[RMDB]
RNA sequence: GGGAACGACUCGAGUAGAGUCGAAAAAUAAAUAAAGUGUACCAAAUGGUAGGUACACACCAAGUGUGCGUUGGUCGCACACAACCACCAGUCAAUAGAGACUGCAAAACCAAACCAAAGAAAAAAAGAUAUGCAAGAGAUUCGUCUCUUGCAUAUCAAAAGAAACAACAACAACAAC
Reactivity to 2A3 in 0.01 (KOAc 150mM, MgCl2 10mM, bicine 150mM(pH8.5), 24C), signal-to-noise 2, nucleotides 027 to 126: a000u050a020a040a010u110a000a100a050g020u000g010u010a010c010c000a040a060a170u180g080g000u060a110g000g000u000a000c000a000c000a010c010c040a120a120g000u010g000u010g000c010g060u110u180g200g030u180c020g020c000a000c010a010c000a000a040c010c020a040c010c020a010g000u010c000a000a090u090a300g240a030g010a070c000u000g000c010a070a070a000a010c050c000a040a070a000c060c020a150a140a010g130a060a090a040a020a010a000a000
Reactivity to DMS in 0.01 (KOAc 150mM, MgCl2 10mM, bicine 150mM(pH8.5), 24C), signal-to-noise 1, nucleotides 027 to 126: a120u000a040a120a080u000a000a120a150g000u000g010u000a000c000c000a130a200a080u000g030g010u000a120g000g010u000a000c000a010c000a070c190c100a040a080g010u000g000u000g000c000g040u020u000g010g030u010c000g030c000a000c000a000c000a060a120c160c060a060c260c040a010g010u030c000a120a150u000a120g010a130g000a000c000u010g000c290a050a100a030a150c050c140a080a080a060c090c040a000a050a130g040a000a000a020a030a050a100a150